[RMDB]
Structure probing data (DMS) for a 177-nucleotide construct. Reactivities are given for positions 27 through 126. It was measured as part of the RMDB library OK2TST. The RNA was probed in 150 mM KOAc, 10 mM MgCl2 and 150 mM bicine (pH 8.5) at 24 C. For DMS, 1,084 sequencing reads were counted.
RNA sequence: GGGAACGACUCGAGUAGAGUCGAAAAUGCUGGCGCGGGUGAUCAGCGCCUCGAUGCGUUGCUGGCCUGGCAGCUCGAUGGCGAUGCGGUCGUGGAAGCCUUCGCCAUGGAUCGACAGGACCCGCCAACCGGUGGAUUACUUCGGUAAUCCACCGGUAAAAGAAACAACAACAACAAC
Reactivity to DMS in 0.01 (KOAc 150mM, MgCl2 10mM, bicine 150mM(pH8.5), 24C), signal-to-noise 1, nucleotides 027 to 126: u020g010c030u000g000g000c110g010c020g000g000g050u030g030a090u000c030a030g040c010g000c000c040u000c200g000a120u010g010c050g010u000u000g040c080u000g000g000c040c020u020g000g020c120a180g000c100u000c030g000a010u000g010g010c000g000a040u020g010c100g040g020u000c040g010u030g010g000a100a140g010c000c000u010u000c020g020c020c000a010u000g010g000a030u000c030g020a170c060a030g030g000a120c050c010c030g000c080c050a100